Record summary
Structure probing data (DMS and 2A3) for a 170-nucleotide construct. Source: RMDB library 15KLIB, as collected in RNAgym.
[RMDB]
RNA sequence: GGGAACGACUCGAGUAGAGUCGAAAAUUCUAGUCUUAGAACCUUUGUUGUAGAUAAGUCUUUGUCAAUUGAGGAGUUUGCUGACGUAGUAAAGGAACAAGUCUCAGACUUGCUUGUUAAAUUACUGAAACUAUGAGCUUCGGCUCAUAGAAAAGAAACAACAACAACAAC
Reactivity to DMS in 0.01 (KOAc 150mM, MgCl2 10mM, bicine 150mM(pH8.5), 24C), signal-to-noise 3, nucleotides 027 to 129: u010u030c010u010a000g020u010c090u000u000a040g000a030a200c030c040u020u010u020g000u030u040g010u040a070g020a090u020a060a050g040u010c020u000u030u000g000u020c040a090a080u070u020g060a000g000g020a170g050u000u060u000g020c050u040g030a110c130g010u020a050g030u040a060a030a090g010g020a110a090c020a050a000g040u030c070u070c030a080g000a060c090u050u030g030c010u010u030g020u010u080a000a000a000u010u090a060c040u000g000a130a050a150
Reactivity to 2A3 in 0.01 (KOAc 150mM, MgCl2 10mM, bicine 150mM(pH8.5), 24C), signal-to-noise 2, nucleotides 027 to 129: u130u000c000u050a010g090u000c000u120u080a000g000a080a060c010c000u050u080u070g030u090u010g010u030a020g030a170u140a010a020g000u040c010u000u070u000g150u040c010a050a060u060u180g100a130g010g020a060g040u000u060u100g100c120u020g040a090c020g010u020a010g040u000a060a120a080g090g020a060a060c020a040a020g030u030c030u000c050a080g000a050c050u060u030g200c010u000u000g010u040u040a070a110a040u170u130a000c010u000g110a070a130a010